[RMDB]
RNA sequence: GGGAACGACUCGAGUAGAGUCGAAAAGAGAAGGACAAAUUGGAUCAAGGCUGCUAGCUCGUUUGUGAAAAUUGAAUGUGGAAAGGUGGCUUUAUGACAGGACUGACCACAUUAAAGGGGGUGAAUGCGCCUAAGUUAAAUUCGUUUAACUUAGGCGAAAAGAAACAACAACAACAAC
Reactivity to 2A3 in 0.01 (KOAc 150mM, MgCl2 10mM, bicine 150mM(pH8.5), 24C), signal-to-noise 4, nucleotides 027 to 126: g050a000g000a040a040g040g010a000c010a020a110a040u110u080g040g010a030u050c020a030a000g030g000c020u050g030c030u100a030g020c020u000c050g120u020u040u080g040u020g080a060a050a030a050u140u140g040a020a010u010g010u020g040g000a070a060a060g020g020u040g050g040c000u110u130u140a200u210g100a070c060a040g000g050a000c000u040g000a010c010c000a030c010a010u040u080a080a040a020g010g010g010g000g000u050g070a090a030u100g040
Reactivity to DMS in 0.01 (KOAc 150mM, MgCl2 10mM, bicine 150mM(pH8.5), 24C), signal-to-noise 7, nucleotides 027 to 126: g000a090g010a090a070g000g010a080c070a030a060a110u010u000g010g010a070u000c040a060a120g010g010c040u000g030c080u000a090g010c050u000c080g010u010u010u000g010u000g010a110a040a060a080u000u010g010a030a020u000g010u000g000g000a050a120a060g000g020u000g010g010c020u010u010u000a070u010g010a090c140a040g010g010a080c040u010g010a300c020c010a010c030a020u010u000a030a070a150g010g000g000g010g010u000g000a070a080u010g010
Notes
This 177-nucleotide RNA was probed chemically with 2A3 and DMS. The DMS profile rests on 10,660 reads. Reactivities are given for positions 27 through 126.